The data come from the RNA Mapping Database (RMDB), library OK2TRN. Structure probing data (2A3 and DMS) for a 177-nucleotide construct.

RNA sequence: GGGAACGACUCGAGUAGAGUCGAAAAGGUCUUACGUCAGCCAUGAGAACAACGGUAACUCUCAUGGUUGUCACAGAGAUGUGACGACGCUGACCAUCUAAGUUACCGCUUGUUAGAUGGUAAGACAGCAGACCAGUACAUUCGUGUACUGGUCUGCAAAAGAAACAACAACAACAAC
Reactivity to 2A3 in 0.01 (KOAc 150mM, MgCl2 10mM, bicine 150mM(pH8.5), 24C), signal-to-noise 1, nucleotides 027 to 126: g030g010u050c010u050u040a040c050g030u010c040a020g000c030c010a050u030g020a070g020a300a000c030a020a030c020g020g010u020a010a020c000u030c010u010c080a040u070g060g000u020u080g000u000c000a010c000a000g040a010g020a050u050g010u010g000a000c040g030a050c120g000c260u110g050a030c000c010a020u000c010u070a040a000g000u000u020a020c000c020g070c100u020u030g020u010u000a020g030a060u030g060g000u040a040a060g020a010c000a010
Reactivity to DMS in 0.01 (KOAc 150mM, MgCl2 10mM, bicine 150mM(pH8.5), 24C), signal-to-noise 1, nucleotides 027 to 126: g030g100u000c010u000u000a130c070g000u000c010a300g000c060c020a040u000g010a260g030a000a040c050a020a040c020g000g000u000a010a010c010u010c130u000c080a000u000g010g000u010u000g000u000c000a000c000a020g000a100g000a220u000g000u000g000a000c020g030a090c270g020c300u040g000a040c020c000a000u010c170u000a020a010g000u000u000a020c000c010g020c190u000u000g010u000u000a010g000a000u000g020g000u000a020a030g010a030c000a100

For 2A3 the reverse transcriptase was SuperScript II with manganese.